[RMDB]
An RNA of 177 nucleotides, treated with DMS and read out base by base. DMS adducts were read by reverse transcription with MarathonRT.

RNA sequence: GGGAACGACUCGAGUAGAGUCGAAAAGAGGGCCGGGUGCGCCGCCGCGAAGAACUGAACGCCGAACUGUUCCCCGCGCUGAUGGGCUUCACCCGCGCUCAACUCAGCGAGAAGUUGGAAGCGGCGGAGUUGCUGACUUGUUCGCAAGUCAGCAACUAAAAGAAACAACAACAACAAC
Reactivity to DMS in 0.01 (KOAc 150mM, MgCl2 10mM, bicine 150mM(pH8.5), 24C), signal-to-noise 1, nucleotides 027 to 126: g010a150g010g000g000c050c010g010g010g020u000g000c300g010c000c000g010c020c000g020c010g000a050a240g000a040a030c040u000g020a130a130c050g000c050c100g010a080a090c220u010g000u000u000c010c000c000c120g020c040g000c030u000g010a040u030g000g010g020c070u010u000c050a130c000c000c010g030c240g010c000u020c020a020a090c180u000c010a010g010c020g000a110g020a140a080g010u000u000g010g020a190a210g000c000g010g010c020g010g000
Conditions: 150 mM KOAc, 10 mM MgCl2 and 150 mM bicine (pH 8.5), 24 C.
Values are in units of 0.01, from 0 to 300, in steps of 10.
It was measured as part of the RMDB library OK2TST.
For DMS, 872 sequencing reads were counted.